[RMDB]
RNA sequence: GGGAACGACUCGAGUAGAGUCGAAAAUUUACGGUAUUCGUACCGUAAACGAGCAACCAAGCAGCGCAACGAGACAAGACGAUAAUAAGAUCGAGCAUGCUGAUAGUAGGAUCUUCGGAUCCUACAAUAAGAAAUUCCAAUUCGUUGGAAUUUCUUAAAAAGAAACAACAACAACAAC
Reactivity to 2A3 in 0.01 (KOAc 150mM, MgCl2 10mM, bicine 150mM(pH8.5), 24C), signal-to-noise 5, nucleotides 027 to 126: u010u000u000a010c010g000g000u020a030u030u120c170g050u030a050c010c000g000u000a000a010a000c010g020a030g070c050a030a090c030c010a030a020g030c000a010g000c010g010c050a080a120c060g020a020g030a120c070a130a020g080a070c070g030a060u080a220a060u130a200a130g070a140u030c020g010a020g040c040a040u070g000c020u050g030a070u110a110g000u000a000g000g010a000u010c000u020u060c250g030g000a000u020c000c000u000a000c000a000a020
Reactivity to DMS in 0.01 (KOAc 150mM, MgCl2 10mM, bicine 150mM(pH8.5), 24C), signal-to-noise 6, nucleotides 027 to 126: u010u000u000a000c010g000g010u000a010u000u000c190g030u000a000c000c000g030u010a000a000a010c090g010a190g010c120a100a160c020c020a140a070g010c040a020g010c070g000c050a060a080c040g000a060g000a090c110a060a110g000a090c100g010a070u000a060a060u010a090a100g000a100u000c020g010a140g010c060a060u000g000c040u000g010a080u000a080g010u000a010g000g000a010u000c000u000u010c150g020g000a010u000c000c000u000a000c000a030a080